RNA sequence: GGGAACGACUCGAGUAGAGUCGAAAACGGCUCGACUGGUUCGCCGGGCUCUGUGAUGCAGACGGUCACACGCAGGGGUGCCCUGGAAAUCCUAGUCAGAAAAGCAUCUCGGUUGGAUCGAUUCAUAUGAACUUCCUUCGGGACAUCCAGCUCAUGCCUAAUGUCCCACAUUCGUGUGGGACAUUAGAAAAGAAACAACAACAACAAC
Reactivity to DMS in 0.01 (KOAc 150mM, MgCl2 10mM, bicine 150mM(pH8.5), 24C), signal-to-noise 2, nucleotides 027 to 156: c070g000g000c000u010c030g030a040c020u000g040g020u000u060c080g060c000c020g010g010g000c020u010c050u000g040u010g010a080u000g070c000a160g010a120c070g000g000u000c000a040c060a060c090g010c150a090g050g030g080g070u010g000c010c020c030u000g000g000a070a090a060u000c010c030u010a150g010u000c100a100g000a030a060a080a060g000c170a100u000c030u000c000g020g040u000u000g000g010a110u000c050g000a170u000u000c020a110u020a100u010g020a020a070c050u000u000c010c030u000u030c130g040g010g040a060c040a030u010c040c020a100g030c020u000c040a040u020g020c150
Reactivity to 2A3 in 0.01 (KOAc 150mM, MgCl2 10mM, bicine 150mM(pH8.5), 24C), signal-to-noise 4, nucleotides 027 to 156: c050g040g000c000u020c040g020a020c020u070g030g010u080u000c020g020c030c020g030g030g000c030u040c020u040g040u060g040a180u070g030c030a040g060a170c070g060g050u130c040a030c010a000c040g020c020a030g000g000g030g060u100g000c000c000c000u040g050g020a060a100a020u010c020c030u040a030g040u040c050a030g070a040a140a000a000g020c010a030u000c030u030c080g080g070u050u050g020g000a030u030c050g070a140u090u030c050a080u200a130u300g060a040a040c030u070u040c010c000u030u030c050g040g000g010a030c030a020u020c010c000a000g000c030u040c050a020u100g030c000